Source: RMDB library M2PK50, as collected in RNAgym. Structure probing data (DMS and 2A3) for a 177-nucleotide construct. For 2A3, 8,612 sequencing reads were counted. 2A3 adducts were read by reverse transcription with SuperScript II with manganese. For DMS, 8,759 sequencing reads were counted. The RNA was probed in 150 mM KOAc, 10 mM MgCl2 and 150 mM bicine (pH 8.5) at 24 C.
RNA sequence: GGGAACGACUCGAGUAGAGUCGAAAACCGCUACUCUUCGGAGUAGCGGAUACAUCUCGGGUCCGGGCCUUACCGUAGGACCAACGGUAAGGCCAGAGAUGAAGGGAGAGAUUUUCGAAUCUCUCAAAGACAGUGUAGAAUUCGUUCUACACUGUCUAAAAGAAACAACAACAACAAC
Reactivity to DMS in 0.01 (KOAc 150mM, MgCl2 10mM, bicine 150mM(pH8.5), 24C), signal-to-noise 5, nucleotides 027 to 126: c000c000g010c000u000a000c000u000c000u000u010c190g020g010a020g010u000a000g010c010g000g010a030u000a050c020a020u000c000u000c010g010g010g010u000c050c040g000g000g000c000c000u000u000a000c000c000g010u000a020g010g020a110c180c140a020a010c000g000g010u000a000a010g000g010c000c000a000g000a010g010a020u000g010a240a130g010g000g000a010g000a020g000a010u000u000u000u010c150g010a020a020u000c000u000c000u000c000a040a080
Reactivity to 2A3 in 0.01 (KOAc 150mM, MgCl2 10mM, bicine 150mM(pH8.5), 24C), signal-to-noise 3, nucleotides 027 to 126: c000c000g000c000u000a000c010u000c010u010u070c240g130g000a010g000u000a000g000c010g000g000a000u010a010c010a020u000c010u010c000g040g020g100u030c040c040g030g000g000c000c000u000u010a000c000c000g040u030a050g090g260a080c050c010a010a000c000g000g010u000a000a000g000g000c000c000a000g000a000g000a010u030g040a060a050g170g120g000a000g000a010g000a000u010u020u040u100c130g070a080a010u000c000u000c000u010c020a010a000